[RMDB]
RNA sequence: GGGAACGACUCGAGUAGAGUCGAAAAGUCUUCCGGCAAGAUGACCGUGGAAGGGAGUUUUCUUAGUUAUCGGAAAUUCCGACCAACCCCAGUUUGACAGAGCUGAGGUGAUUUACGAGGUUAUGCAAUUCUCCUGUGUAAAAAGUCAGCAUGGGACAUGAUGAUAACAUUUCGAUGUUAUCAUCAUAAAAGAAACAACAACAACAAC
Reactivity to DMS in 0.01 (KOAc 150mM, MgCl2 10mM, bicine 150mM(pH8.5), 24C), signal-to-noise 6, nucleotides 027 to 156: g000u010c030u000u000c020c020g020g020c050a100a160g000a130u000g010a030c010c020g030u000g020g010a110a160g020g010g010a050g010u000u030u000u000c020u000u000a140g020u000u010a120u000c090g010g010a040a040a090u000u010c010c010g010a130c030c030a110a080c010c000c010c010a040g020u000u000u010g010a190c220a180g000a080g020c000u010g010a060g000g020u000g010a070u000u000u000a080c040g010a120g020g020u000u000a100u000g000c040a070a150u000u000c040u000c020c010u000g000u000g010u010a040a050a070a060a140g000u010c040a140g000c010a050u000g000g010g010a090c140
Reactivity to 2A3 in 0.01 (KOAc 150mM, MgCl2 10mM, bicine 150mM(pH8.5), 24C), signal-to-noise 9, nucleotides 027 to 156: g040u000c030u050u000c030c010g020g000c050a060a060g050a200u090g050a090c020c030g050u100g050g030a030a030g070g030g010a030g010u020u000u070u020c040u090u100a160g040u120u150a160u250c030g010g010a040a070a060u090u000c010c010g020a030c020c040a030a040c000c000c000c010a010g000u030u060u080g080a070c060a040g080a010g030c010u020g020a030g050g040u070g060a090u080u090u120a060c070g030a040g040g030u060u040a030u110g020c030a050a100u120u050c020u020c020c010u030g010u010g020u100a080a100a050a040a030g090u100c050a010g000c010a020u050g020g000g010a030c050
This 207-nucleotide RNA was probed chemically with DMS and 2A3. Reactivities are given for positions 27 through 156.